Structure probing data (2A3) for a 207-nucleotide construct. The 2A3 profile rests on 656 reads. The RNA was probed in 150 mM KOAc, 10 mM MgCl2 and 150 mM bicine (pH 8.5) at 24 C. 2A3 adducts were read by reverse transcription with SuperScript II with manganese.

RNA sequence: GGGAACGACUCGAGUAGAGUCGAAAAUAAACGGAAUCGCCACAUGUAAGAGCCUGUCUGUGGGGGCUGCAUGCGGUUAAAUUUAAAACACAGACUACACAUGUAGACGCCUUAAGUGAAAGAUUUUCGGACGCGGGUUCGAUUCCCGCCGCCUCCACUGAAUCUUAUGGUUCGCCAUAAGAUUCAGAAAAGAAACAACAACAACAAC
Reactivity to 2A3 in 0.01 (KOAc 150mM, MgCl2 10mM, bicine 150mM(pH8.5), 24C), signal-to-noise 2, nucleotides 027 to 156: u050a020a070a000c020g020g020a040a040u030c030g010c010c000a020c000a010u010g010u070a170a090g030a070g300c040c020u020g020u010c000u000g030u020g000g030g000g020g000c010u000g020c000a000u010g000c010g020g020u030u050a100a030a070u150u140u100a050a060a010a010c000a000c000a000g010a000c000u070a020c020a030c030a110u270g000u070a010g060a130c030g090c040c050u150u110a140a000g050u080g110a100a020a020g000a160u070u030u170u290c070g030g000a050c050g010c010g020g000g060u060u060c010g010a070u010u090c000c000c000g020c000c000g030c000c050u000c000c030a000